Source information
An RNA of 177 nucleotides, treated with DMS and 2A3 and read out base by base. The reactions ran in a buffer of 150 mM KOAc, 10 mM MgCl2 and 150 mM bicine (pH 8.5), at 24 C. For DMS the reverse transcriptase was MarathonRT.

[RMDB]
RNA sequence: GGGAACGACUCGAGUAGAGUCGAAAACAUGUGUACUUCGGUACACAUGAAAUGAGCGCCAUUAUUGGCUAAGGCUACACGGACGGCCGGGUCAAAUGCCGAAAAUCGUUGCGUUCGCGCAACGAAACACCCAGCAUACGUUCGCGUAUGCUGGGUGAAAAGAAACAACAACAACAAC
Reactivity to DMS in 0.01 (KOAc 150mM, MgCl2 10mM, bicine 150mM(pH8.5), 24C), signal-to-noise 1, nucleotides 027 to 126: c010a000u000g000u000g000u000a020c000u000u000c250g030g010u000a000c000a000c000a000u010g000a060a040a050u000g020a090g000c140g000c030c060a150u000u000a140u010u030g010g000c020u010a110a030g020g010c010u000a030c070a100c100g010g010a060c080g000g020c020c000g000g010g000u010c040a060a030a040u000g060c060c000g000a040a040a120a080u000c010g000u000u000g010c000g010u000u020c090g000c010g050c010a000a000c000g000a000a060a130
Reactivity to 2A3 in 0.01 (KOAc 150mM, MgCl2 10mM, bicine 150mM(pH8.5), 24C), signal-to-noise 2, nucleotides 027 to 126: c010a000u020g000u000g000u000a010c080u040u050c180g070g000u010a010c000a010c000a010u000g000a020a000a010u150g010a020g070c040g090c030c020a030u110u150a150u280u200g010g010c050u060a140a080g030g000c010u020a020c060a040c130g100g050a020c050g070g050c050c020g010g010g000u050c040a060a020a070u100g000c010c000g020a090a010a010a080u060c010g000u000u010g000c010g040u020u030c140g000c000g000c040a020a000c000g040a030a010a000